[RMDB]
RNA sequence: GGGAACGACUCGAGUAGAGUCGAAAAUGUGUUUGGGUUGGCGUUGGCUGUUCCACCCUCUGGAGCUGCGAGGGCGUAUGCAUCACGAUGAGCGACAACAAUCGCGCACGACGCCUGGUCCGCAAGACCGUAAUUUAGGGUUCGCCCUAAAUUACGGAAAAGAAACAACAACAACAAC
Reactivity to DMS in 0.01 (KOAc 150mM, MgCl2 10mM, bicine 150mM(pH8.5), 24C), signal-to-noise 5, nucleotides 027 to 126: u010g010u010g020u000u000u010g010g000g020u010u010g000g020c200g010u010u000g010g000c070u010g000u000u000c060c030a140c040c020c020u010c070u000g020g010a150g020c070u020g000c040g020a140g000g000g000c060g030u010a060u000g000c070a070u000c130a160c060g010a090u000g000a110g010c030g000a060c140a050a120c280a070a120u000c020g000c060g000c030a070c060g000a060c030g030c000c020u000g010g000u020c040c030g010c100a060a100g000a180
Reactivity to 2A3 in 0.01 (KOAc 150mM, MgCl2 10mM, bicine 150mM(pH8.5), 24C), signal-to-noise 2, nucleotides 027 to 126: u160g070u000g060u040u080u090g060g010g020u040u030g010g000c010g000u030u020g040g000c030u050g040u110u000c010c020a030c000c050c000u000c020u020g070g000a080g030c070u060g040c050g030a040g010g030g000c000g000u040a060u160g030c020a040u100c050a030c080g140a130u090g010a010g060c010g140a030c020a220a020c000a070a090u040c000g000c000g010c010a050c040g060a010c000g000c000c000u020g000g060u040c000c000g010c020a010a050g030a020

Source: RMDB library OK2TST, as collected in RNAgym. The record gives the reactivity of an RNA of 177 nucleotides to DMS and 2A3. The 2A3 profile rests on 3,326 reads.